[RMDB]
RNA sequence: GGGAACGACUCGAGUAGAGUCGAAAAAGUAACUUCGGUUACUAGCCUACCUUUGUGGUGUGGUCUCGGGAGCGAUGGUCUGACCCAUUGGGUCAGCUACAUCGCGACGAUCGAGACGUAACAUCACCACUCUGGUCUACCAGCGCUUCGGCGCUAAAGGUAUUGUUGUCUUCGGACAACAAUACCUAAAAGAAACAACAACAACAAC
Reactivity to 2A3 in 0.01 (KOAc 150mM, MgCl2 10mM, bicine 150mM(pH8.5), 24C), signal-to-noise 2, nucleotides 027 to 156: a000g000u010a000a000c050u060u130c300g110g000u010u010a000c030u010a000g060c010c030u000a000c010c000u010u000u010g000u010g030g010u000g020u030g050g010u000c000u000c000g010g000g000a040g000c000g000a000u000g000g110u040c000u010g010a000c000c050c150a300u170u300g000g010g000u010c000a000g000c030u060a040c010a000u000c000g000c000g000a000c000g010a010u020c030g000a000g000a010c000g000u020a050a090c020a100u190c010a000c000c000a000c010u000c010u000g060g000u000c000u050a180c040c120a040g020c000g000c010u110u200c260g100g000c000g010c010u200a160a230
The record gives the reactivity of an RNA of 207 nucleotides to 2A3. Conditions: 150 mM KOAc, 10 mM MgCl2 and 150 mM bicine (pH 8.5), 24 C. Reactivities are given for positions 27 through 156. It was measured as part of the RMDB library RNAMAK. For 2A3 the reverse transcriptase was SuperScript II with manganese.